Chemical mapping of a 177-nucleotide RNA with DMS and 2A3.

[RMDB]
RNA sequence: GGGAACGACUCGAGUAGAGUCGAAAAGAAAGAAAAUCGGACAACCAAACCGACGAAUGCCGUGUAAGGUUGUAACGGCACAAACGUCUCGAAAGAGUAAAAGAAGCUCAAAACGAGACCAAAGAAAAGUAUCGCCUACUUUCGAGUAGGCGAUACUAAAAGAAACAACAACAACAAC
Reactivity to DMS in 0.01 (KOAc 150mM, MgCl2 10mM, bicine 150mM(pH8.5), 24C), signal-to-noise 1, nucleotides 027 to 126: g020a130a130a110g110a050a040a160a080u000c000g000g000a040c070a000a200c110c020a180a260a000c160c000g000a000c130g070a070a050u040g000c000c000g000u160g040u050a140a090g000g000u000u000g000u050a000a000c000g000g000c090a000c200a020a040a300c300g000u000c000u070c000g000a000a050a300g000a000g000u000a040a110a240a130g000a300a060g000c000u000c000a020a000a220a020c000g000a000g000a000c000c180a000a000a090g020a020a000a000
Reactivity to 2A3 in 0.01 (KOAc 150mM, MgCl2 10mM, bicine 150mM(pH8.5), 24C), signal-to-noise 1, nucleotides 027 to 126: g070a090a110a000g020a110a180a000a020u050c000g000g000a000c000a070a050c010c010a050a000a000c000c000g000a000c070g070a260a080u100g000c000c000g090u070g020u000a080a040g230g000u020u000g000u040a020a020c030g010g000c000a000c000a080a160a000c080g000u030c000u000c000g000a080a240a080g010a000g040u120a160a110a000a120g210a100a030g000c000u030c000a030a050a020a020c000g000a000g010a000c050c070a070a120a000g040a020a080a000
Overview: The RNA was probed in 150 mM KOAc, 10 mM MgCl2 and 150 mM bicine (pH 8.5) at 24 C. Source: RMDB library OK1LIB, as collected in RNAgym. High DMS reactivity at an A or C suggests that its Watson-Crick edge is free.